[RMDB]
RNA sequence: GGGAACGACUCGAGUAGAGUCGAAAACUGGCAGACCCACUGCAUGAGGCAAGCAGGACUCCUGACCCAACUGUGUUUCUGAGCAGUGCUGGCGUGGGCCGCACCGGGGUGUUCAUCACUCUGAGCAUCGUCCUGGAGCGCAUGCGCUACGAGGGCGCUUCCUCGAUGAUUUCGAUCAUCGAGGAAGAAAAGAAACAACAACAACAAC
Reactivity to 2A3 in 0.01 (KOAc 150mM, MgCl2 10mM, bicine 150mM(pH8.5), 24C), signal-to-noise 1, nucleotides 027 to 156: c050u020g050g000c030a020g010a160c010c030c020a030c060u020g000c010a130u140g110a040g050g090c030a010a050g020c050a050g060g060a090c000u040c030c000u030g110a160c020c000c040a060a090c100u040g030u000g000u100u030u000c020u060g000a000g080c040a020g040u020g090c070u080g040g000c000g070u110g020g130g000c050c000g030c010a020c030c000g010g000g000g000u010g010u070u160c090a140u170c010a060c060u040c070u080g000a010g000c020a030u070c020g090u040c000c030u100g070g020a010g000c050g060c060a090u180g000c030g020c000u090a130c040g070a030g040g030g000c030g000
Chemical mapping of a 207-nucleotide RNA with 2A3. The RNA was probed in 150 mM KOAc, 10 mM MgCl2 and 150 mM bicine (pH 8.5) at 24 C. 2A3 adducts were read by reverse transcription with SuperScript II with manganese.